[RMDB]
RNA sequence: GGGAACGACUCGAGUAGAGUCGAAAAACUAGUAUGUACAGGGGUGAGUUGACCUGUCAUCUAGACUGCUGACCAUCAACUCACCGGUCAGCUGGAUGAUGUCCACAGAGUACGUCAUCAGUACUCAGAGUUAGGAUGCCUUCGGGUAUCUUAACUCAAAAGAAACAACAACAACAAC
Reactivity to 2A3 in 0.01 (KOAc 150mM, MgCl2 10mM, bicine 150mM(pH8.5), 24C), signal-to-noise 9, nucleotides 027 to 126: a000c010u010a010g050u120a060u060g060u090a010c010a010g030g020g010g040u110g070a110g040u040u060g080a070c000c010u010g010u000c000a000u000c000u010a020g060a100c040u030g000c000u000g000a000c010c000a030u100c040a050a090c050u020c090a050c040c000g000g000u000c000a000g000c010u010g040g010a030u070g010a020u060g070u040c020c010a060c050a070g030a000g010u020a010c010g040u010c030a140u040c030a040g020u020a010c010u010c030a010
Reactivity to DMS in 0.01 (KOAc 150mM, MgCl2 10mM, bicine 150mM(pH8.5), 24C), signal-to-noise 9, nucleotides 027 to 126: a180c010u000a010g000u050a000u000g010u060a010c010a020g000g010g000g010u010g010a070g020u000u010g010a070c030c020u000g000u000c000a000u000c010u000a020g000a180c060u010g000c010u000g010a010c010c070a170u020c100a050a070c080u020c090a060c170c130g000g000u000c000a010g000c000u010g010g010a060u010g010a060u010g010u010c020c040a110c270a090g010a040g010u010a010c000g000u010c120a050u020c080a140g000u010a010c010u000c020a160